Background:
This 177-nucleotide RNA was probed chemically with 2A3 and DMS. The RNA was probed in 150 mM KOAc, 10 mM MgCl2 and 150 mM bicine (pH 8.5) at 24 C. Source: RMDB library OK2TST, as collected in RNAgym.

RNA sequence: GGGAACGACUCGAGUAGAGUCGAAAAAGCACGAUGAUGAUGAGGGCGAUGAGGAUGAUCUUGUAGGACAGCCUCAGGUUCUUGAGCAUGGGACGCCUCCUCCUGGUCUGCGGGAAGUGCUCAUACACAUCCCAGACAACUUCGGUUGUCUGGGAUGAAAAGAAACAACAACAACAAC
Reactivity to 2A3 in 0.01 (KOAc 150mM, MgCl2 10mM, bicine 150mM(pH8.5), 24C), signal-to-noise 2, nucleotides 027 to 126: a000g080c050a000c100g070a080u110g050a060u060g010a020u080g010a070g030g000g010c050g050a100u020g000a010g050g010a020u010g020a110u030c090u150u170g160u250a080g040g050a010c020a010g030c020c000u020c020a010g030g040u020u020c010u090u080g030a020g000c030a020u060g010g010g000a030c060g060c000c020u000c010c020u000c000c020u060g030g060u120c060u100g050c000g000g000g060a070a010g010u020g000c000u010c030a020u060a040c070a000
Reactivity to DMS in 0.01 (KOAc 150mM, MgCl2 10mM, bicine 150mM(pH8.5), 24C), signal-to-noise 2, nucleotides 027 to 126: a060g000c010a050c060g040a090u020g010a070u000g000a040u000g010a100g020g000g020c030g010a140u000g000a030g010g000a060u020g000a110u000c020u000u000g000u020a170g020g010a040c030a050g010c020c010u000c040a060g000g010u000u010c020u000u000g010a100g020c060a030u000g000g010g000a090c030g000c040c060u000c010c020u000c030c060u010g020g010u000c020u010g020c060g000g000g000a100a100g020u000g000c010u010c050a110u000a070c230a130